[RMDB]
The record gives the reactivity of an RNA of 177 nucleotides to DMS. DMS adducts were read by reverse transcription with MarathonRT.

RNA sequence: GGGAACGACUCGAGUAGAGUCGAAAAGAUAUGGAACCUUCCUGUAAGUGAUACCGGGAGUCCCUUGGGUCGGAAACGACCCUUGGGACGAAGAACGGUAUCACUUACAGGAGAGGUUCCUAAGUCAGACAUCUAUUUUCUUCGGAAAAUAGAUGUCAAAAGAAACAACAACAACAAC
Reactivity to DMS in 0.01 (KOAc 150mM, MgCl2 10mM, bicine 150mM(pH8.5), 24C), signal-to-noise 1, nucleotides 027 to 126: g000a090u000a300u030g000g020a000a000c000c000u000u000c000c000u000g000u000a030a010g020u000g000a010u000a000c000c000g000g000g020a100g000u000c000c000c020u000u030g000g030g030u000c010g000g000a090a130a220c000g000a000c000c000c000u000u000g010g010g010a000c030g040a040a160g010a110a260c000g010g000u000a000u000c000a000c000u000u000a000c000a000g030g000a000g000a020g010g000u000u000c010c000u000a000a070g010u020c100a210